[RMDB]
RNA sequence: GGGAACGACUCGAGUAGAGUCGAAAAGAUAUGGAUCACAGUGGACAUGCUCGUCGGAAACGAUAGAGCAACAGCCACGUGAUCCUAAGUCAAAACUUGGUGAAAUGCUUCGGCAUUUCACCAAGAACUACAAACGUUUCUUCGGAAACGUUUGUAGAAAAGAAACAACAACAACAAC
Reactivity to DMS in 0.01 (KOAc 150mM, MgCl2 10mM, bicine 150mM(pH8.5), 24C), signal-to-noise 2, nucleotides 027 to 126: g010a000u010a300u000g000g010a030u000c000a010c000a180g080u000g000g000a010c120a140u000g000c000u000c030g010u000c000g000g000a100a030a110c000g000a010u000a110g000a030g010c000a000a080c230a170g000c000c000a010c020g010u000g000a000u000c000c010u000a030a070g000u000c020a070a070a110a180c000u000u000g000g020u000g010a010a020a000u000g000c000u000u000c200g020g000c000a000u020u000u000c020a000c000c000a000a000g000a040a220
Reactivity to 2A3 in 0.01 (KOAc 150mM, MgCl2 10mM, bicine 150mM(pH8.5), 24C), signal-to-noise 2, nucleotides 027 to 126: g020a020u050a010u180g000g000a000u010c010a010c120a160g030u000g000g080a110c060a140u040g040c010u010c000g060u000c010g020g000a050a030a010c010g040a020u150a300g010a000g000c000a000a010c020a010g040c000c000a020c000g000u010g010a000u000c000c000u000a020a010g030u020c030a000a010a160a270c010u020u000g000g000u030g010a000a000a000u010g000c020u100u130c300g050g000c000a010u010u000u000c010a000c030c000a000a000g010a000a010